[RMDB]
RNA sequence: GGGAACGACUCGAGUAGAGUCGAAAAGCAAGACCUUCCCCAGCAGCCCUGGAGACUCAUUGGAGGACCAGCUGAAGCCCAUGUUGGAGUGGGCCCACGGGGGCUUCAAGCCCACUGGGAUCGAGGGAUAACUUUUGGACUUCGGUCCAAAAGUUAUAAAAGAAACAACAACAACAAC
Reactivity to DMS in 0.01 (KOAc 150mM, MgCl2 10mM, bicine 150mM(pH8.5), 24C), signal-to-noise 1, nucleotides 027 to 126: g000c060a060a060g000a170c040c040u000u000c030c000c010c110a140g020c060a160g000c040c060c050u000g000g010a120g000a190c000u000c040a080u000u000g030g040a100g020g000a120c060c050a070g020c060u000g010a030a120g000c000c000c000a040u000g010u020u010g010g000a200g000u000g010g000g020c010c010c020a050c040g000g000g040g000g000c000u000u020c110a070a130g020c010c030c000a090c070u000g020g000g020a280u000c040g000a030g030g000g000

The record gives the reactivity of an RNA of 177 nucleotides to DMS.